[RMDB]
An RNA of 177 nucleotides, treated with 2A3 and DMS and read out base by base.
RNA sequence: GGGAACGACUCGAGUAGAGUCGAAAAGGAUCCUCUCACAGGAUUGUCUCUGUGUUCCGAAACUCCAACAGUAUUGCUUCGGGACACCUAGAGCAAUACUCUAGGUAUAGAGAGUAGGAGAGGAUCGGGUGAGUAAAUAGUUCGCUAUUUACUCACCAAAAGAAACAACAACAACAAC
Reactivity to 2A3 in 0.01 (KOAc 150mM, MgCl2 10mM, bicine 150mM(pH8.5), 24C), signal-to-noise 7, nucleotides 027 to 126: g070g000a000u010c010c000u010c000u020c010a220c050a100g140g130a230u120u200g120u040c010u000c010u010g040u010g010u030u010c000c000g000a020a010a010c050u120c090c040a120a100c040a230g150u200a180u150u260g030c010u000u010c000g000g000g010a000c010a010c000c010u020a000g000a000g000c040a030a050u100a200c010u000c000u010a020g030g060u070a040u180a120g040a010g010a000g050u090a060g000g070a010g000a000g010g000a000u000c000g000
Reactivity to DMS in 0.01 (KOAc 150mM, MgCl2 10mM, bicine 150mM(pH8.5), 24C), signal-to-noise 6, nucleotides 027 to 126: g020g000a010u000c000c000u010c010u000c010a120c140a200g010g010a110u000u000g010u010c010u000c000u010g020u010g010u010u010c000c000g010a010a030a030c020u010c220c130a110a130c240a130g010u010a230u010u000g000c060u000u000c020g010g000g010a030c020a030c020c080u010a000g010a020g020c040a070a060u010a300c000u000c000u000a040g010g000u010a080u000a010g000a020g000a090g010u010a090g010g000a030g000a010g010g010a000u000c000g010

For DMS the reverse transcriptase was MarathonRT.
Source: RMDB library OK2TRN, as collected in RNAgym.